[RMDB]
RNA sequence: GGGAACGACUCGAGUAGAGUCGAAAAUCCUAAGUCCGUAGAGGUGUGGUGUAAACGGGAGUAAAUCGGAAACGAUUUACGAAGAACGGAAGAAGCCACACUACCCACCUACGGAUAUGGAAAAAGAUCCAUCUGGUCUUCGGACCAGAUGGAUCAACAUGGGCAUACGGUUCGCCGUAUGCCCAUGAAAAGAAACAACAACAACAAC
Reactivity to 2A3 in 0.01 (KOAc 150mM, MgCl2 10mM, bicine 150mM(pH8.5), 24C), signal-to-noise 1, nucleotides 027 to 156: u040c010c000u040a120a040g000u030c010c000g000u000a000g000a020g050g020u010g000u010g010g000u080g010u000a020a020a020c000g000g000g000a040g020u010a000a010a000u000c010g020g050a100a010a070c020g010a000u000u000u010a010c000g000a120a000g020a000a000c020g000g000a190a270g000a000a000g170c000c000a000c000a000c010u010a040c020c030c000a080c020c000u000a000c000g020g000a000u030a010u000g030g030a070a060a010a030a080g060a010u090c000c000a000u000c000u000g000g020u000c010u060u130c300g090g020a010c000c010a000g000a000u000g000g000a000u000c000a000a000